Chemical mapping of a 207-nucleotide RNA with 2A3 and DMS. The DMS profile rests on 7,615 reads. It was measured as part of the RMDB library OK3TST. The 2A3 profile rests on 6,616 reads.
[RMDB]
RNA sequence: GGGAACGACUCGAGUAGAGUCGAAAACGGCGAGGACAAGGUCGUCCACUACAUCGACGCCGAUUCGGUGUACGAGCGCGGCAAGGUGCCGAUCGUCGACGAAGGACCGAAGGGUCUGUUCGACUUCGUCUCCGAUCAACGGCUGUGGGAGACGGCGCAUAGCAAACUGAUUCGUCAGUUUGCUAUGAAAAGAAACAACAACAACAAC
Reactivity to 2A3 in 0.01 (KOAc 150mM, MgCl2 10mM, bicine 150mM(pH8.5), 24C), signal-to-noise 6, nucleotides 027 to 156: c010g010g020c020g020a030g010g020a030c020a050a040g100g010u020c020g020u000c010c030a050c020u040a020c000a060u110c060g130a080c090g050c050c020g030a040u050u040c020g010g000u030g040u080a040c050g020a040g040c090g000c020g050g020c050a090a160g190g030u120g030c020c010g020a060u060c050g020u010c010g000a010c010g050a080a030g040g010a050c000c050g050a070a050g200g010g030u040c080u110g120u060u030c020g030a060c000u020u000c010g000u000c000u000c010c010g010a030u040c070a100a060c020g010g010c050u060g020u050g020g020g010a060g000a010c000g010g000c010g000
Reactivity to DMS in 0.01 (KOAc 150mM, MgCl2 10mM, bicine 150mM(pH8.5), 24C), signal-to-noise 2, nucleotides 027 to 156: c020g010g040c010g000a090g050g000a040c020a060a070g020g030u000c040g030u000c020c030a180c030u010a070c040a040u000c050g020a030c030g030c050c030g010a170u000u000c020g040g010u000g010u000a040c040g020a070g030c080g080c030g020g030c040a130a150g010g020u000g030c010c020g020a030u000c080g030u000c030g010a070c020g010a090a150g000g000a050c030c020g010a140a130g000g050g000u000c020u000g010u010u010c040g000a090c030u000u000c000g010u000c000u000c030c010g000a070u000c030a070a060c000g010g010c020u000g010u000g010g010g000a160g020a070c020g030g020c060g000
DMS adducts were read by reverse transcription with MarathonRT.